[RMDB]
RNA sequence: GGGAACGACUCGAGUAGAGUCGAAAAAGUGCUGGAUAAAAGGCAUGUCCUGCUAUAUAUGAAUAGGACAUCAUGUUCUUGGCGCUGCCUAAUGAACUGGAAUUAAUUUGGCUUAGUUCGACGAUUACUGCUAGUAGUGCUUCGGCACUACUAGCAGAAAAGAAACAACAACAACAAC
Reactivity to 2A3 in 0.01 (KOAc 150mM, MgCl2 10mM, bicine 150mM(pH8.5), 24C), signal-to-noise 1, nucleotides 027 to 126: a010g030u020g000c010u000g020g010a040u110a120a120a090a080g080g050c080a000u000g000u000c000c010u000g010c050u030a020u050a050u020a050u300g060a130a120u080a150g000g000a040c000a040u000c040a030u080g030u040u020c050u070u090g000g010c070g000c030u000g000c000c010u130a170a100u140g030a030a060c050u060g000g150a080a030u140u080a030a100u100u190u090g120g010c050u100u130a040g010u020u050c020g040a040c030g070a080u060u190a130
Reactivity to DMS in 0.01 (KOAc 150mM, MgCl2 10mM, bicine 150mM(pH8.5), 24C), signal-to-noise 1, nucleotides 027 to 126: a100g020u000g010c000u020g000g010a060u010a060a100a070a070g010g010c150a020u000g030u000c010c000u000g020c140u000a130u000a100u010a120u010g000a050a070u020a000g030g010a010c060a070u000c050a140u000g000u010u000c010u000u020g020g030c020g000c040u000g020c000c000u010a030a120u000g000a030a010c040u000g010g010a070a070u010u010a090a070u020u000u000g000g000c070u000u000a020g010u000u000c010g000a060c210g000a080u000u020a070
Source: RMDB library OK2TST, as collected in RNAgym. Chemical mapping of a 177-nucleotide RNA with 2A3 and DMS. DMS adducts were read by reverse transcription with MarathonRT. For 2A3, 749 sequencing reads were counted. The DMS profile rests on 999 reads. The reactions ran in a buffer of 150 mM KOAc, 10 mM MgCl2 and 150 mM bicine (pH 8.5), at 24 C. For 2A3 the reverse transcriptase was SuperScript II with manganese.